[RMDB]
RNA sequence: GGGAACGACUCGAGUAGAGUCGAAAAGGUAGUGCCAGAAUGCAGAUUACAUAGCUGAUGUAAAUGGCAAAUUCUGUGUUUUUAGAGGGCAGUCCUAAGAGCACCGAUGGUUUGACUGGUGGCCCAACUAUCGAAGAUGUUUCGACAUCUUCGAUAGAAAAGAAACAACAACAACAAC
Reactivity to DMS in 0.01 (KOAc 150mM, MgCl2 10mM, bicine 150mM(pH8.5), 24C), signal-to-noise 8, nucleotides 027 to 126: g000g010u010a060g010u010g010c010c010a070g010a080a080u000g010c010a040g010a110u010u000a060c160a070u000a200g010c110u010g000a120u000g010u010a050a060a100u000g010g000c020a060a060a070u000u000c010u000g020u000g010u000u000u000u000u010a100g010a130g000g000g010c080a060g000u000c060c010u000a040a070g010a070g010c020a020c020c100g000a050u000g010g010u000u010u010g000a120c050u000g010g020u000g010g000c000c010c020a080a210
Reactivity to 2A3 in 0.01 (KOAc 150mM, MgCl2 10mM, bicine 150mM(pH8.5), 24C), signal-to-noise 5, nucleotides 027 to 126: g080g030u100a030g060u080g060c020c010a020g030a060a020u080g030c020a000g030a140u060u060a060c030a060u100a140g070c100u120g090a040u070g080u140a060a110a100u120g030g000c000a020a030a060u060u000c010u000g040u000g080u010u010u000u040u110a130g030a170g020g070g000c030a030g090u060c000c000u020a070a010g030a010g060c010a000c020c020g040a050u100g040g110u040u090u170g090a060c040u030g020g010u030g030g000c010c000c000a010a040